[RMDB]
RNA sequence: GGGAACGACUCGAGUAGAGUCGAAAAGAUAUGGAAUAGGACGCGAUAAGCCAUUGUCGGAAACGACAAAUGGCUUUUGACGCGUCCCUAUUCCUAAGUCAAACUCCCUGAGUUCGCUCAGGGAGAACGAGUACCACUAGUUCGCUAGUGGUACUCGAAAAGAAACAACAACAACAAC
Reactivity to DMS in 0.01 (KOAc 150mM, MgCl2 10mM, bicine 150mM(pH8.5), 24C), signal-to-noise 2, nucleotides 027 to 126: g010a020u000a130u000g000g010a000a030u000a020g000g020a030c000g030c010g020a160u010a010a010g030c010c010a010u000u000g000u010c010g000g000a050a010a090c010g010a010c000a010a020a050u020g000g010c000u000u000u000u000g010a260c090g020c000g010u000c080c060c070u000a000u000u000c010c000u010a000a080g000u000c010a220a130a160c000u010c000c000c000u000g000a020g000u000u000c300g020c000u000c010a010g000g000g020a000g010a020a030
Reactivity to 2A3 in 0.01 (KOAc 150mM, MgCl2 10mM, bicine 150mM(pH8.5), 24C), signal-to-noise 2, nucleotides 027 to 126: g020a010u050a000u120g000g000a000a010u000a020g000g010a000c000g040c010g130a220u100a300a000g000c020c010a010u000u000g020u000c020g020g060a110a050a000c030g000a000c040a010a170a020u020g010g020c020u030u000u020u060g040a010c000g000c000g000u030c010c000c010u000a010u010u000c010c000u000a040a000g020u000c000a050a050a230c000u000c010c000c000u000g020a010g010u110u270c300g010c180u000c010a000g000g020g000a000g010a000a020
Chemical mapping of a 177-nucleotide RNA with DMS and 2A3. The data come from the RNA Mapping Database (RMDB), library TTRDES. Reactivities are given for positions 27 through 126. The reactions ran in a buffer of 150 mM KOAc, 10 mM MgCl2 and 150 mM bicine (pH 8.5), at 24 C. For DMS the reverse transcriptase was MarathonRT.